RNA sequence: GGGAACGACUCGAGUAGAGUCGAAAAUUCGAGCCGCGAGGACAGGUGCUCACGCCUUUCCAUAGGGAUAGGAUUGAUGGUGCCCUCACCAUUGAUUCUGCUCAAGGGUCCACCUUCCCUGUGGUAAGCCAUAUGAGGAAUUCGUUCCUCAUAUGGCAAAAGAAACAACAACAACAAC
Reactivity to DMS in 0.01 (KOAc 150mM, MgCl2 10mM, bicine 150mM(pH8.5), 24C), signal-to-noise 4, nucleotides 027 to 126: u010u000c050g010a160g020c000c030g030c050g020a070g000g010a060c200a010g000g000u000g020c110u000c100a050c140g010c040c010u000u000u000c060c100a080u000a080g000g010g000a070u010a010g000g010a040u000u000g010a020u010g000g010u000g010c210c140c300u000c020a070c000c000a000u000u000g000a000u000u010c010u010g010c140u010c080a060a060g000g000g000u000c090c100a070c010c010u010u000c000c000c010u000g020u000g010g010u010a050a080
Reactivity to 2A3 in 0.01 (KOAc 150mM, MgCl2 10mM, bicine 150mM(pH8.5), 24C), signal-to-noise 3, nucleotides 027 to 126: u050u030c020g010a020g020c000c000g000c040g040a060g020g010a030c040a080g050g010u040g050c050u060c040a060c030g150c000c000u080u060u040c070c030a120u190a060g050g000g050a060u090a040g020g000a000u010u040g030a030u020g000g000u040g030c070c020c090u170c020a020c000c010a010u000u020g010a010u030u010c020u030g000c040u080c110a040a080g020g000g010u100c060c000a030c030c000u020u060c010c000c000u020g000u010g010g010u030a090a020
Conditions: 150 mM KOAc, 10 mM MgCl2 and 150 mM bicine (pH 8.5), 24 C. Structure probing data (DMS and 2A3) for a 177-nucleotide construct. 2A3 is a SHAPE reagent: it acylates the 2'-hydroxyl of flexible nucleotides of all four kinds. High DMS reactivity at an A or C suggests that its Watson-Crick edge is free. It was measured as part of the RMDB library OK2TRN. For DMS the reverse transcriptase was MarathonRT.